Notes:
An RNA of 207 nucleotides, treated with 2A3 and DMS and read out base by base. Values are in units of 0.01, from 0 to 300, in steps of 10. For 2A3 the reverse transcriptase was SuperScript II with manganese. The reactions ran in a buffer of 150 mM KOAc, 10 mM MgCl2 and 150 mM bicine (pH 8.5), at 24 C.
RNA sequence: GGGAACGACUCGAGUAGAGUCGAAAAAUGAGAUCCCAUCUUGCACACAGUGCUAAUUUGAGAUUCUCAUGCCUCCUACUUGGAGAGAUCUGGACUAGAAGUCAGGGCAUCUGACUCUGCCAGCCACAAAACGUACAAGGCUUCGGCCUUGUACGAAGGGUUUAAGUUAGUUCGCUAACUUAAACCCAAAAGAAACAACAACAACAAC
Reactivity to 2A3 in 0.01 (KOAc 150mM, MgCl2 10mM, bicine 150mM(pH8.5), 24C), signal-to-noise 5, nucleotides 027 to 156: a000u020g000a000g000a000u000c000c000c000a000u010c000u010u020g000c000a010c010a070c130a150g020u020g000c060u120a090a060u020u000u020g050a050g010a050u300u040c000u000c020a020u050g040c020c010u020c000c000u120a230c130u140u250g020g010a040g000a010g010a090u040c000u010g030g000a060c030u100a110g020a130a020g080u000c000a000g040g050g190c070a150u100c110u010g000a000c000u000c010u010g010c000c010a010g050c020c010a080c040a040a130a060a000c020g000u000a000c000a000a000g000g000c000u040u140c170g050g000c000c000u000u000g000u000a000c000g000a000a000
Reactivity to DMS in 0.01 (KOAc 150mM, MgCl2 10mM, bicine 150mM(pH8.5), 24C), signal-to-noise 2, nucleotides 027 to 156: a020u000g000a030g010a040u000c000c010c000a010u000c070u000u010g010c020a010c030a260c180a160g050u010g000c020u000a000a030u000u000u000g000a000g000a020u010u000c000u010c000a020u010g000c090c030u000c000c020u000a040c180u000u010g020g000a140g000a100g000a090u000c070u000g010g030a070c040u000a150g010a080a070g020u000c010a030g010g010g010c250a150u000c000u010g010a060c000u000c010u000g000c000c000a130g000c000c030a160c060a060a100a060a250c010g020u000a000c000a000a020g030g030c000u000u020c300g020g030c000c000u020u010g000u000a000c010g020a020a020